Conditions: 150 mM KOAc, 10 mM MgCl2 and 150 mM bicine (pH 8.5), 24 C.
Chemical mapping of a 207-nucleotide RNA with 2A3 and DMS.
For 2A3, 1,448 sequencing reads were counted.
2A3 adducts were read by reverse transcription with SuperScript II with manganese.
Source: RMDB library M2RFPK, as collected in RNAgym.
[RMDB]
RNA sequence: GGGAACGACUCGAGUAGAGUCGAAAAGAAAGAGAGUUAGACACGGUUGAUCUCACCCUUCGGGGGGGCGAUAGAGAUCACUGGAAGCACUACCGGACAACCGGAACAUUGCAGCAAUGCAGCCCAAAAAAUCCAAACAUCUUCGGAUGUUUGGAAACACUAAACAGAGGUUCGCCUCUGUUUAGUGAAAAGAAACAACAACAACAAC
Reactivity to 2A3 in 0.01 (KOAc 150mM, MgCl2 10mM, bicine 150mM(pH8.5), 24C), signal-to-noise 1, nucleotides 027 to 156: g090a010a070a000g080a000g010a000g030u070u080a070g040a050c030a020c060g040g040u090u180g020a030u000c010u020c010a110c010c000c030u120u230c200g040g000g000g000g010g030g000c020g020a050u110a110g000a000g000a000u010c010a010c000u010g020g030a030a020g000c040a010c060u060a020c020c020g030g000a090c080a140a300c080c020g000g010a030a000c040a040u070u100g010c010a000g010c020a030a060u050g010c020a030g000c000c060c000a040a090a020a000a020a020u020c010c000a000a000a000c000a000u010c010u040u030c070g120g000a000u000g000u000u000u000g000g000a000a000a000
Reactivity to DMS in 0.01 (KOAc 150mM, MgCl2 10mM, bicine 150mM(pH8.5), 24C), signal-to-noise 1, nucleotides 027 to 156: g000a110a080a080g020a140g020a110g020u000u000a090g010a170c030a140c070g000g040u010u020g010a030u010c000u000c010a180c000c000c010u000u000c160g040g010g050g000g010g040g010c020g010a090u030a100g010a060g000a020u010c010a030c110u000g030g010a130a110g000c040a020c040u010a190c010c010g050g050a090c140a110a180c030c020g000g010a100a110c110a060u000u010g010c010a080g000c090a080a060u000g000c000a080g000c030c010c000a020a040a040a080a030a120u000c010c000a000a030a010c000a000u000c000u000u000c300g040g000a020u000g010u000u010u000g000g000a050a010a070